[RMDB]
RNA sequence: GGGAACGACUCGAGUAGAGUCGAAAAGAUAUGGAUUCCCAGGUGGGAGCAACUCUCGGAAACGAGAGAAUUGCAUCGAUCACCGGAAUCCUAAGUCAAAAGUAGGUCUGUCUUCGGACAGACCUACCACUGCUCAUCAGUUCGCUGAUGAGCAGUGAAAAGAAACAACAACAACAAC
Reactivity to DMS in 0.01 (KOAc 150mM, MgCl2 10mM, bicine 150mM(pH8.5), 24C), signal-to-noise 2, nucleotides 027 to 126: g000a010u010a170u030g000g000a030u000u000c010c030c290a160g030g010u010g000g000g010a070g020c010a040a060c010u000c010u000c010g020g010a040a050a100c000g010a020g000a010g000a040a100u000u010g000c000a300u010c240g010a090u000c000a020c000c030g000g000a020a010u000c000c010u000a010a080g000u000c010a120a060a040a150g010u000a000g000g020u010c000u010g000u000c000u010u030c240g000g000a010c000a000g010a000c000c000u000a000c000
Reactivity to 2A3 in 0.01 (KOAc 150mM, MgCl2 10mM, bicine 150mM(pH8.5), 24C), signal-to-noise 2, nucleotides 027 to 126: g000a010u030a020u100g000g010a010u010u010c000c030c080a070g150g030u010g000g160g100a080g020c000a020a040c000u000c010u000c000g050g030a050a050a010c020g000a000g050a010g060a110a180u090u010g000c010a070u290c130g160a150u070c000a000c010c000g000g010a000a000u010c010c000u010a070a020g010u020c030a000a000a170a110g020u000a000g020g000u000c010u020g010u000c000u050u210c300g000g000a000c000a020g000a000c000c000u000a000c010
The data come from the RNA Mapping Database (RMDB), library TTRDES. Structure probing data (DMS and 2A3) for a 177-nucleotide construct. Values cover nucleotides 27 to 126. High 2A3 reactivity points to a flexible backbone, as in loops and unpaired stretches.